[RMDB]
This 177-nucleotide RNA was probed chemically with DMS. Values cover nucleotides 27 to 126. It was measured as part of the RMDB library OK2TRN. For DMS the reverse transcriptase was MarathonRT. The reactions ran in a buffer of 150 mM KOAc, 10 mM MgCl2 and 150 mM bicine (pH 8.5), at 24 C.
RNA sequence: GGGAACGACUCGAGUAGAGUCGAAAACGUGUGGUCGUAUAUCUGUAUCAGGCUCGGGACGGUUUUAUGUUCAAUAUGCUCUUUAGCAGUUGUCAAACCAGUAUUUUCUUCGGAAGAGUAUGGCGAGUGUUUGUAAAGGGUUCGCCCUUUACAAACAAAAAGAAACAACAACAACAAC
Reactivity to DMS in 0.01 (KOAc 150mM, MgCl2 10mM, bicine 150mM(pH8.5), 24C), signal-to-noise 3, nucleotides 027 to 126: c100g020u010g020u010g010g010u000c070g000u000a080u010a070u010c050u010g010u010a070u000c060a080g010g000c030u000c070g010g000g020a090c080g000g000u010u010u010u000a060u010g010u020u000c050a050a110u000a080u000g010c030u000c170u010u010u000a040g020c030a040g010u000u010g010u010c060a030a090a050c020c030a080g010u010a070u000u000u010u000c020u010u000c110g000g010a040a040g000a060g020u010a070u000g020g000c080g010a100g010